This 177-nucleotide RNA was probed chemically with DMS and 2A3.
[RMDB]
RNA sequence: GGGAACGACUCGAGUAGAGUCGAAAAGGGACAAGCUGCCUGGGCAAGAUGGCUAUAGAAGAGCUUUGUGCUCUUGGCCAGAGCUCAUCUAACGGAGUGGAGCAUAAAAGCAGUGUAGUAAUGCCCAGUGGGUGUAGAAGUUCGCUUCUACACCCACAAAAGAAACAACAACAACAAC
Reactivity to DMS in 0.01 (KOAc 150mM, MgCl2 10mM, bicine 150mM(pH8.5), 24C), signal-to-noise 2, nucleotides 027 to 126: g010g000g020a090c000a070a220g000c060u000g000c040c050u000g010g000g030c050a080a070g010a160u000g000g020c040u010a140u010a070g020a100a060g000a020g000c010u020u010u030g020u010g020c000u000c090u010u010g020g010c000c010a010g010a110g000c000u010c030a050u010c030u020a070a170c210g020g020a130g040u000g010g000a130g000c030a060u010a030a090a080a160g000c020a020g000u010g010u010a100g020u010a070a120u010g000c000c010c000a140
Reactivity to 2A3 in 0.01 (KOAc 150mM, MgCl2 10mM, bicine 150mM(pH8.5), 24C), signal-to-noise 3, nucleotides 027 to 126: g040g000g030a020c020a130a050g000c000u010g010c030c020u040g000g050g060c020a030a030g040a130u020g010g040c030u040a030u080a220g210a140a000g000a000g050c000u120u120u190g090u170g000c000u020c050u050u080g030g000c010c000a010g000a010g000c020u020c010a060u010c030u070a090a090c080g070g060a070g200u180g030g030a020g040c020a020u070a110a090a010a000g040c040a020g020u020g000u130a050g010u030a050a110u110g010c010c000c060a010